[RMDB]
RNA sequence: GGGAACGACUCGAGUAGAGUCGAAAAGUCUCACGAGUGCAAAGACAAAGGUAGUUGACUCCGGAGCUACCAGUACUCGAAGGAAUGCGAAAGAGUUCAGGUAUUCCAACCGGAGAAGAACUCAAAACAUUAUCGGAGGUUUCGACCUCCGAUAAUGAAAAGAAACAACAACAACAAC
Reactivity to DMS in 0.01 (KOAc 150mM, MgCl2 10mM, bicine 150mM(pH8.5), 24C), signal-to-noise 6, nucleotides 027 to 126: g000u000c000u000c020a280c020g000a010g000u010g010c020a150a130a110g010a130c300a110a140a100g000g000u000a000g000u000u000g000a090c000u000c000c000g010g000a080g010c010u000a000c000c000a130g010u000a000c000u000c000g010a110a120g000g010a090a040u050g020c200g040a060a160a100g000a020g040u000u000c010a160g000g000u010a060u010u020c080c100a110a180c000c020g000g010a010g000a140a120g010a000a010c000u000c030a100a090a100a150
Reactivity to 2A3 in 0.01 (KOAc 150mM, MgCl2 10mM, bicine 150mM(pH8.5), 24C), signal-to-noise 6, nucleotides 027 to 126: g040u020c010u020c010a030c020g000a000g000u010g020c040a080a180a070g070a190c060a080a120a030g020g000u000a000g000u000u050g030a050c000u020c000c000g000g000a000g010c000u000a000c010c000a000g000u010a000c000u000c000g000a030a030g090g050a090a050u230g080c090g070a160a080a120g050a050g000u030u080c050a020g010g170u120a200u140u040c050c010a060a050c000c010g010g000a000g010a000a020g030a020a010c010u010c020a010a030a000a050
An RNA of 177 nucleotides, treated with DMS and 2A3 and read out base by base.
For 2A3, 6,149 sequencing reads were counted.
As a SHAPE reagent, 2A3 marks flexible, mostly unpaired nucleotides at the ribose 2'-OH.
It was measured as part of the RMDB library OK1LIB.
The reactions ran in a buffer of 150 mM KOAc, 10 mM MgCl2 and 150 mM bicine (pH 8.5), at 24 C.
Reactivities are given for positions 27 through 126.
High DMS reactivity at an A or C suggests that its Watson-Crick edge is free.